[RMDB]
RNA sequence: GGGAACGACUCGAGUAGAGUCGAAAAGUUCAACAAGAUCUUGACGUUAUUUUGCCUGGUGAGUUUUCCAAGAAGCAGUUAGGACUGCUCCAACCUACUGACAAUUCUACAACUGUUAGUGUUACUGACCUCCCAUUUAGUUCGCUAAAUGGGAGGUAAAAGAAACAACAACAACAAC
Reactivity to DMS in 0.01 (KOAc 150mM, MgCl2 10mM, bicine 150mM(pH8.5), 24C), signal-to-noise 2, nucleotides 027 to 126: g010u000u000c020a060a060c100a190a090g000a120u000c040u000u000g000a130c100g020u010u010a100u000u000u020u000g010c020c010u010g010g000u010g010a080g000u000u010u020u010c020c020a100a160g000a110a040g000c040a010g000u000u010a090g030g010a190c080u000g010c020u000c050c010a100a060c060c030u010a010c030u000g010a040c010a010a060u000u010c140u000a060c120a040a040c070u000g020u000u000a080g020u000g000u000u000a050c070u020g000
Reactivity to 2A3 in 0.01 (KOAc 150mM, MgCl2 10mM, bicine 150mM(pH8.5), 24C), signal-to-noise 1, nucleotides 027 to 126: g040u120u050c020a100a070c020a140a000g010a150u000c040u070u030g010a030c070g090u000u110a110u020u130u010u050g010c000c020u050g000g000u030g030a090g090u000u010u010u000c000c010a030a010g000a050a000g000c010a000g010u020u190a100g090g100a020c010u010g010c000u000c040c000a030a070c000c000u050a010c000u010g010a000c010a040a100u050u020c070u190a070c020a120a040c070u010g000u030u010a030g000u000g030u140u020a040c070u070g050